[RMDB]
RNA sequence: GGGAACGACUCGAGUAGAGUCGAAAAUUACACUUAGAGGCUAAUAGUAGGGCCUGGGCUUUCUGUGUUAAAUGCCAUAAUGAUAUAUUGGCAGCAACAGACCCCAGUGAGGCUUUCGAGAAAUUCGUACCGGUACCCUUCGGGGUACCGAAAAGAAACAACAACAACAAC
Reactivity to 2A3 in 0.01 (KOAc 150mM, MgCl2 10mM, bicine 150mM(pH8.5), 24C), signal-to-noise 3, nucleotides 027 to 129: u040u010a040c040a020c040u080u080a030g000a030g050g000c030u010a070a080u020a300g130u010a070g040g090g000c000c000u000g020g000g000c000u130u260u030c000u030g050u000g010u050u160a150a090a000u030g030c000c030a020u020a010a250u220g170a010u010a010u020a010u300u060g000g000c000a000g030c010a000a130c000a020g010a100c000c000c000c030a050g040u040g050a060g040g000c000u070u100u010c000g000a010g000a010a050a000u110u110c040g010u020a050c000
Reactivity to DMS in 0.01 (KOAc 150mM, MgCl2 10mM, bicine 150mM(pH8.5), 24C), signal-to-noise 4, nucleotides 027 to 129: u020u010a180c190a080c110u040u010a100g010a000g090g070c030u000a090a050u120a090g010u030a060g010g020g060c050c030u010g000g050g020c030u000u040u040c120u070g000u000g000u000u000a010a020a030u040g000c010c020a010u030a040a080u110g030a140u000a120u000a100u090u040g000g010c020a070g030c140a110a050c020a000g040a020c300c000c000c050a000g030u050g000a070g000g000c070u000u040u070c030g010a030g020a070a160a070u020u000c040g020u000a220c210